Structure probing data (DMS and 2A3) for a 177-nucleotide construct. The data come from the RNA Mapping Database (RMDB), library OK2TST. The 2A3 profile rests on 1,302 reads.
[RMDB]
RNA sequence: GGGAACGACUCGAGUAGAGUCGAAAAUGGUAUGAUCGACCUGGACACCGCCGUCGCUCCGGAGACCUACGAUCAGGCCCUGCUAGCGGCCGGAGGCUCCGUUCUCGCCGUCGAGCUGGUCGUGCGGACACAUUCCAAGCUUCGGCUUGGAAUGUGUAAAAGAAACAACAACAACAAC
Reactivity to DMS in 0.01 (KOAc 150mM, MgCl2 10mM, bicine 150mM(pH8.5), 24C), signal-to-noise 2, nucleotides 027 to 126: u010g010g000u000a080u000g000a060u010c050g010a110c060c020u000g000g020a110c150a160c030c010g020c030c040g030u000c030g030c020u000c050c000g000g000a050g000a110c000c010u000a130c060g000a070u000c060a130g010g000c000c000c030u000g000c170u000a090g030c130g000g010c020c020g010g020a040g010g000c030u000c020c030g020u000u000c040u000c040g010c070c050g010u000c090g010a060g000c020u000g010g010u000c030g000u000g020c040g010g000
Reactivity to 2A3 in 0.01 (KOAc 150mM, MgCl2 10mM, bicine 150mM(pH8.5), 24C), signal-to-noise 2, nucleotides 027 to 126: u170g040g000u180a090u120g010a110u010c020g020a030c020c030u030g030g060a030c020a030c060c000g020c000c030g050u040c040g020c080u070c050c000g100g000a090g140a300c000c000u060a090c050g070a070u060c030a030g030g000c010c000c000u140g190c150u180a060g050c070g060g000c000c000g000g040a010g010g000c020u020c060c030g020u070u030c020u020c010g050c030c040g080u070c030g010a030g050c030u030g080g030u100c000g070u100g050c040g040g000